[RMDB]
Chemical mapping of a 207-nucleotide RNA with 2A3.
RNA sequence: GGGAACGACUCGAGUAGAGUCGAAAAAGAAGCAGGGGUUAAGGAAGAAUGUUCAGGCUAGGCGCGGUGGCUUAUGCCUGUAACUCCAGCACUUUGGGAGGCCGAGGCAGGCACGUCACUCCAGCUCAGGAGUUCGAGACCAACCCUGGGCAACAUGCAACUUACGUGCUUUCGAGCACGUAAGUUGAAAAGAAACAACAACAACAAC
Reactivity to 2A3 in 0.01 (KOAc 150mM, MgCl2 10mM, bicine 150mM(pH8.5), 24C), signal-to-noise 1, nucleotides 027 to 156: a010g040a000a000g070c010a030g080g010g000g000u070u000a040a040g050g010a050a020g030a120a090u130g050u090u110c010a000g020g000c010u020a050g030g010c050g030c130g220g090u140g010g030c030u060u090a030u200g000c020c040u000g020u070a010a010c000u010c020c010a040g000c010a000c040u060u100u190g090g000g100a030g000g010c010c040g020a130g010g060c000a000g010g050c030a010c030g030u020c020a010c040u020c040c030a010g000c020u010c020a000g000g090a190g020u020u020c040g020a060g080a110c040c040a000a010c000c000c000u050g010g000g050c000a030a020c060a180u300g000

For 2A3 the reverse transcriptase was SuperScript II with manganese.